[RMDB]
RNA sequence: GGGAACGACUCGAGUAGAGUCGAAAAGAUAUGGAUCUUUAGUAGCAGCGCUGCGAUGAAAACCCCGCAUUUCGGAAACGAAAUGCGGGGUUGGAGCAGCGAACUACUGCGAACGAGAUCCUAAGUCCCUAGUAGAUCUGUUCGCAGAUCUACUAGGAAAAGAAACAACAACAACAAC
Reactivity to DMS in 0.01 (KOAc 150mM, MgCl2 10mM, bicine 150mM(pH8.5), 24C), signal-to-noise 1, nucleotides 027 to 126: g020a080u010a150u000g000g030a000u000c000u000u020u000a060g000u010a140g000c000a000g000c000g020c000u010g020c010g000a140u000g000a190a090a040a020c000c020c010c000g020c000a030u000u000u000c000g020g000a090a030a100c010g040a010a020a000u010g000c000g050g000g010g000u000u000g010g000a210g040c000a000g000c000g020a010a030c020u000a300c010u000g000c010g000a200a150c250g000a000g000a010u010c010c000u000a020a080g000u010c020
Reactivity to 2A3 in 0.01 (KOAc 150mM, MgCl2 10mM, bicine 150mM(pH8.5), 24C), signal-to-noise 1, nucleotides 027 to 126: g020a060u110a060u170g000g000a000u030c000u070u070u020a020g010u000a010g000c000a000g040c000g050c000u020g000c100g300a300u170g150a300a300a070a080c020c000c010c000g020c000a030u040u000u020c010g050g020a110a080a030c010g010a010a060a020u060g070c130g090g040g090g010u060u020g000g030a030g000c000a000g050c000g020a010a000c010u230a040c000u010g030c020g010a030a030c010g000a000g000a020u000c000c010u000a000a030g000u130c010
Notes: Source: RMDB library TTRINS, as collected in RNAgym. This 177-nucleotide RNA was probed chemically with DMS and 2A3. The DMS profile rests on 1,207 reads.